[RMDB]
RNA sequence: GGGAACGACUCGAGUAGAGUCGAAAACGCGUAGAGGUAGUCCUCAACGUCAUGCAGCCAGUUGCAGUCAUUGAGCACCGUGCUCACGUUACGUUCAACUACGUACGACAUAUCCGAAAGCGUCAGUCUCGCAACUUCGUUGCGCAGCAACUGAACCUCAUCAUGACCCAUUCGUGGGUCAUGAUGAAAAAGAAACAACAACAACAAC
Reactivity to 2A3 in 0.01 (KOAc 150mM, MgCl2 10mM, bicine 150mM(pH8.5), 24C), signal-to-noise 3, nucleotides 027 to 156: c050g030c010g040u070a040g000a030g110g020u090a040g060u170c020c000u040c020a000a000c040g000u010c010a110u060g030c040a030g020c090c050a090g010u150u030g000c010a020g060u050c050a080u030u120g020a030g020c000a010c100c040g100u120g080c050u060c000a000c050g080u100u050a000c000g010u050u090c040a090a040c100u070a000c000g030u030a020c000g050a040c050a040u100a090u110c070c030g130a150a120a050g030c050g000u010c010a000g080u100c020u010c000g040c000a020a010c010u250u230c190g010u000u000g020c010g000c030a010g030c020a030a030c010u040g000a030a040c000c000
Reactivity to DMS in 0.01 (KOAc 150mM, MgCl2 10mM, bicine 150mM(pH8.5), 24C), signal-to-noise 1, nucleotides 027 to 156: c030g000c000g060u000a030g000a100g020g020u020a100g000u000c100c010u000c020a030a070c030g080u000c070a180u020g010c070a090g020c000c100a180g000u010u000g000c020a130g000u010c100a260u010u020g020a070g000c030a060c090c050g010u010g030c030u000c080a040c010g020u020u000a000c020g030u000u010c050a100a160c020u000a000c020g120u010a080c040g000a050c080a120u000a090u000c000c000g020a070a120a110g020c090g060u000c000a020g000u000c010u010c010g000c020a000a020c010u000u010c180g000u000u000g010c000g000c090a140g000c040a070a040c040u010g000a050a010c040c030